RNA sequence: GGGAACGACUCGAGUAGAGUCGAAAAUCUUCGUGCUGCGCGUCGGUCUUGCGGUGGUUGACGGUCGCCGCGUAGUUCCAGUGAACGGCCGAUACGUGGUAGCCGUCCGCGCCGUUCUCGGCGGUGACCACGCGAUGGUAUUCGUACCAUCGCGUGGAAAAGAAACAACAACAACAAC
Reactivity to 2A3 in 0.01 (KOAc 150mM, MgCl2 10mM, bicine 150mM(pH8.5), 24C), signal-to-noise 1, nucleotides 027 to 126: u070c020u090u110c030g070u120g090c030u040g020c050g000c020g050u000c000g000g060u010c050u060u190g000c000g040g000u040g010g000u060u020g030a020c040g000g030u090c030g020c000c000g030c000g000u020a020g010u000u080c010c030a180g000u130g190a070a060c030g000g050c120c060g060a040u020a070c020g000u000g000g010u030a000g030c000c040g030u000c020c020g030c020g010c000c000g050u110u030c030u010c000g050g000c000g000g030u030g020a040
Reactivity to DMS in 0.01 (KOAc 150mM, MgCl2 10mM, bicine 150mM(pH8.5), 24C), signal-to-noise 1, nucleotides 027 to 126: u010c040u010u000c080g030u010g010c010u000g000c030g010c010g040u000c060g010g010u000c060u010u000g040c030g000g000u000g000g020u000u000g000a060c090g000g000u000c040g040c010c000g000c010g000u000a020g010u000u000c030c090a210g020u040g020a080a060c040g010g030c080c090g020a070u000a020c030g020u000g020g040u000a130g000c010c000g010u010c020c060g000c060g020c000c000g010u000u010c030u000c040g030g010c020g010g010u010g010a260
An RNA of 177 nucleotides, treated with 2A3 and DMS and read out base by base. For 2A3 the reverse transcriptase was SuperScript II with manganese. The data come from the RNA Mapping Database (RMDB), library OK2TRN. The RNA was probed in 150 mM KOAc, 10 mM MgCl2 and 150 mM bicine (pH 8.5) at 24 C.